[RMDB]
This 177-nucleotide RNA was probed chemically with 2A3. For 2A3 the reverse transcriptase was SuperScript II with manganese. For 2A3, 683 sequencing reads were counted. The RNA was probed in 150 mM KOAc, 10 mM MgCl2 and 150 mM bicine (pH 8.5) at 24 C.
RNA sequence: GGGAACGACUCGAGUAGAGUCGAAAAGAAAGCUCCUCACCCGUGUGGAGGAGAAUGGCUAUAACCACGGAAACCUGAGGAAACAGGAAGCCACAACGCAAGCCAUGUGGUUCGCACACGGAAGAAAGCACCGGAUCGAUUUCGAUCGAUCCGGUGCAAAAGAAACAACAACAACAAC
Reactivity to 2A3 in 0.01 (KOAc 150mM, MgCl2 10mM, bicine 150mM(pH8.5), 24C), signal-to-noise 1, nucleotides 027 to 126: g110a000a030a040g010c000u000c000c000u000c000a000c030c030c000g020u000g000u000g040g000a000g000g030a000g000a000a040u000g000g000c000u060a030u130a250a030c080c000a060c060g070g000a000a000a090c000c000u000g000a030g070g260a070a070a070c000a010g000g000a010a000g000c010c020a010c020a080a000c140g020c020a000a070g080c000c000a030u010g010u000g120g000u070u080c060g020c030a050c010a010c000g120g110a060a010g110a000a070a000